[RMDB]
The record gives the reactivity of an RNA of 177 nucleotides to DMS and 2A3.
2A3 adducts were read by reverse transcription with SuperScript II with manganese.
The data come from the RNA Mapping Database (RMDB), library OK1LIB.
RNA sequence: GGGAACGACUCGAGUAGAGUCGAAAACAAACAAAGCAAAAUUGUCCAUUGAGGUCUACCGUCAGAAUUUCGGGCGGAUAUACGAUAUUAUACAGAAAGCCGGCCGCAAUGUCGUAUAGAAAGGAAAGGUAUACCCUGAGUUCGCUCAGGGUAUACCAAAAGAAACAACAACAACAAC
Reactivity to DMS in 0.01 (KOAc 150mM, MgCl2 10mM, bicine 150mM(pH8.5), 24C), signal-to-noise 1, nucleotides 027 to 126: c020a120a130a080c220a070a190a120g050c100a150a030a070a150u000u100g010u000c080c040a200u050u000g030a090g000g000u000c090u000a030c030c000g040u000c060a150g040a160a160u000u000u030c010g000g000g010c020g010g000a050u000a000u000a040c000g000a010u000a020u000u020a110u040a090c150a130g030a060a110a010g000c000c010g000g010c000c050g050c050a090a030u030g000u000c000g000u020a000u090a050g000a090a090a110g000g000a000a030a130
Reactivity to 2A3 in 0.01 (KOAc 150mM, MgCl2 10mM, bicine 150mM(pH8.5), 24C), signal-to-noise 2, nucleotides 027 to 126: c100a000a120a000c020a000a060a000g200c030a010a000a040a120u150u020g010u020c100c010a070u000u150g100a040g080g010u060c030u080a050c000c000g030u040c010a000g070a200a170u020u030u120c070g020g000g010c000g000g040a000u010a000u000a000c000g000a000u000a010u030u060a040u120a110c020a030g170a070a100a000g000c000c010g010g000c000c000g070c080a030a000u110g000u000c000g000u000a030u030a040g010a040a150a050g140g120a040a090a020
Overview:
The RNA was probed in 150 mM KOAc, 10 mM MgCl2 and 150 mM bicine (pH 8.5) at 24 C. Values cover nucleotides 27 to 126.